[RMDB]
RNA sequence: GGGAACGACUCGAGUAGAGUCGAAAAGAAGAGACCAGGAGCCGGAUGGCUAAGGCCCUUCAGGGAAAGCAUAGGCAUUUCAAUGGAUACCCGUCCCCGCUGGUUUUCCCUUACCUCAGCCAUGUUGCUGAUGACAAUUGCCAUGAUGAUGCCAUAACAUGCAAAAUGCAUUCGUGCAUUUUGCAUGAAAAGAAACAACAACAACAAC
Reactivity to 2A3 in 0.01 (KOAc 150mM, MgCl2 10mM, bicine 150mM(pH8.5), 24C), signal-to-noise 3, nucleotides 027 to 156: g080a010a020g050a010g020a060c010c010a030g080g130a020g010c030c050g150g070a090u140g010g000c020u050a030a050g020g000c020c010c000u060u070c060a010g040g000g020a030a050a000g050c050a100u090a160g050g000c000a040u060u120u090c130a130a100u090g010g000a030u090a150c020c000c020g000u020c020c030c000c020g040c030u040g020g000u020u000u010u010c010c010c000u020u070a030c020c010u010c000a010g000c040c020a120u150g050u080u120g040c020u010g000a030u040g000a020c000a040a040u060u080g020c000c020a000u030g010a030u080g010a000u070g040c010c070a020u120a090a060
Reactivity to DMS in 0.01 (KOAc 150mM, MgCl2 10mM, bicine 150mM(pH8.5), 24C), signal-to-noise 1, nucleotides 027 to 156: g000a070a070g000a210g020a060c010c050a160g000g010a120g090c000c010g030g000a140u000g030g010c000u000a070a070g040g010c020c020c050u000u010c120a120g000g040g010a070a050a070g040c040a170u000a130g010g050c010a080u000u000u000c100a130a150u000g010g010a100u010a030c030c010c030g040u020c020c020c040c080g050c070u010g010g020u010u030u000u000c000c030c020u000u000a020c000c030u000c010a050g060c030c010a150u000g000u000u000g000c000u020g000a060u000g010a100c060a100a200u010u010g010c000c030a060u000g010a130u030g030a110u000g000c000c030a040u000a070a210